Annotation: Structure probing data (DMS and 2A3) for a 207-nucleotide construct. The reactions ran in a buffer of 150 mM KOAc, 10 mM MgCl2 and 150 mM bicine (pH 8.5), at 24 C. Source: RMDB library RNAMAK, as collected in RNAgym. DMS adducts were read by reverse transcription with MarathonRT. Values cover nucleotides 27 to 156.
RNA sequence: GGGAACGACUCGAGUAGAGUCGAAAAGGGGUCGACUGAGUGUACGCAGUGAGAGGACACGCUGAAGCCUCCACGGCGUGUCUACCCACCUCACUGAACUACGUACACGAGAUGAGUCGACGGAGGCACCCAAAACAGAAAGGUUCGCCUUUCUGAACUGUCUUAGGUUGUUCGCAACCUAAGACAGAAAAGAAACAACAACAACAAC
Reactivity to DMS in 0.01 (KOAc 150mM, MgCl2 10mM, bicine 150mM(pH8.5), 24C), signal-to-noise 1, nucleotides 027 to 156: g010g010g050g010u010c000g040a010c000u000g000a300g000u000g050u000a020c000g010c000a070g020u020g030a070g040a300g030g000a020c030a020c000g040c050u000g010a040a120g020c020c000u000c030c000a280c000g010g000c000g000u000g000u000c000u000a000c000c020c000a300c010c000u000c000a030c040u010g020a060a110c020u000a300c070g020u000a020c070a050c020g010a080g000a140u000g000a050g010u000c000g020a080c050g040g000a080g030g050c080a080c020c020c010a060a070a200a090c000a020g000a000a020a000g000g010u000u000c300g080c010c000u000u020u000c000u000g000a060a110
Reactivity to 2A3 in 0.01 (KOAc 150mM, MgCl2 10mM, bicine 150mM(pH8.5), 24C), signal-to-noise 2, nucleotides 027 to 156: g020g000g030g000u010c010g000a010c010u020g060a030g160u010g000u000a000c020g000c000a000g000u000g010a000g000a010g000g000a000c000a000c010g000c010u020g040a030a000g010c000c000u000c000c000a020c000g010g000c000g000u000g000u000c000u020a050c070c060c020a040c010c010u000c010a010c000u000g000a040a030c100u190a040c170g000u010a000c000a000c000g000a010g000a090u240g040a010g010u000c000g000a000c000g000g000a000g000g000c010a020c000c010c010a030a040a000a030c010a000g010a000a010a010g040g030u100u130c220g170c030c000u010u000u000c000u010g000a050a040